[RMDB]
Notes:
Chemical mapping of a 177-nucleotide RNA with 2A3 and DMS. For DMS the reverse transcriptase was MarathonRT. As a SHAPE reagent, 2A3 marks flexible, mostly unpaired nucleotides at the ribose 2'-OH. Reactivities are given for positions 27 through 126.

RNA sequence: GGGAACGACUCGAGUAGAGUCGAAAAGAUAUGGAGAAGUUCUCGAUAAGAAUGAUCACAUCGGAAACGAUGUGCGUAUUCUUUUGACGAGAUCACUCCUAAGUCAAAAGGGUAGUUCGCUACCCAACCUCUAUCCCUUGUUCGCAAGGGAUAGAGGAAAAGAAACAACAACAACAAC
Reactivity to 2A3 in 0.01 (KOAc 150mM, MgCl2 10mM, bicine 150mM(pH8.5), 24C), signal-to-noise 2, nucleotides 027 to 126: g040a020u080a040u130g020g000a020g010a300a130g050u000u000c010u000c010g000a010u020a070a020g000a010a020u020g030a060u110c000a000c000a020u010c000g000g050a030a080a030c010g010a000u000g000u000g000c000g000u070a020u040u000c000u020u090u060u150g210a070c030g000a000g000a020u000c000a010c040u000c000c000u020a160a020g090u040c020a010a030a140a100g020g010g010u010a020g020u050u080c250g060c130u010a000c010c000c010a010a020
Reactivity to DMS in 0.01 (KOAc 150mM, MgCl2 10mM, bicine 150mM(pH8.5), 24C), signal-to-noise 3, nucleotides 027 to 126: g000a040u000a300u010g010g010a030g030a160a160g010u000u000c000u000c010g000a110u000a020a000g000a010a000u000g000a040u000c010a010c010a000u020c000g020g010a130a080a240c000g000a020u000g000u010g000c210g000u000a010u000u000c000u010u000u000u000g020a240c110g000a010g000a010u000c030a200c010u000c000c000u000a020a120g000u000c020a050a080a080a180g020g020g010u000a010g010u000u010c250g000c000u010a030c000c000c000a020a020
For DMS, 1,710 sequencing reads were counted. Conditions: 150 mM KOAc, 10 mM MgCl2 and 150 mM bicine (pH 8.5), 24 C. In probing experiments dimethyl sulfate is read out at A N1 and C N3, which are open when not base-paired.